[RMDB]
RNA sequence: GGGAACGACUCGAGUAGAGUCGAAAACUUGCCUCGGUAGUUAAUGACGUCGUAGUCCAUCUCGUUAAGCACGUACAUAGGUGUACCCACAAACAUGUGCACGCACUCGAACUUGCGGUGGAUGUUAGCAAUCUCCUCCCAUAGCAUCUCAAAGGCACCCUUCACAAUACUUCGGUAUUGUGAAGGGAAAAGAAACAACAACAACAAC
Reactivity to 2A3 in 0.01 (KOAc 150mM, MgCl2 10mM, bicine 150mM(pH8.5), 24C), signal-to-noise 4, nucleotides 027 to 156: c010u010u110g020c030c000u040c010g050g000u120a090g020u130u120a120a090u190g060a060c030g020u070c050g030u060a040g040u050c040c010a080u040c070u020c120g030u060u120a100a020g060c040a040c050g060u170a040c050a130u120a060g030g040u030g020u080a090c020c070c030a040c050a040a120a020c050a070u150g010u030g010c060a010c080g000c010a010c040u040c030g000a070a030c060u030u110g030c090g040g000u020g000g050a020u040g040u110u090a030g010c030a070a160u010c010u010c080c000u000c000c030c000a020u050a040g020c020a030u020c030u040c080a060a060a000g070g000c000a040
Reactivity to DMS in 0.01 (KOAc 150mM, MgCl2 10mM, bicine 150mM(pH8.5), 24C), signal-to-noise 1, nucleotides 027 to 156: c030u000u000g020c040c030u100c000g000g010u000a110g000u000u000a090a050u010g030a140c050g060u000c070g050u000a050g080u000c040c000a050u020c070u010c020g070u000u000a030a060g030c030a090c050g000u000a060c060a030u000a100g030g040u000g050u000a120c080c040c100a080c110a160a090a050c050a030u010g050u000g040c000a020c000g030c040a050c010u000c030g000a110a070c160u000u000g010c000g040g050u020g020g000a090u010g030u000u000a040g010c030a070a090u000c040u000c080c020u000c000c010c020a140u000a050g000c030a050u000c030u020c040a050a020a190g000g040c040a150
Structure probing data (2A3 and DMS) for a 207-nucleotide construct.
High DMS reactivity at an A or C suggests that its Watson-Crick edge is free.
The RNA was probed in 150 mM KOAc, 10 mM MgCl2 and 150 mM bicine (pH 8.5) at 24 C.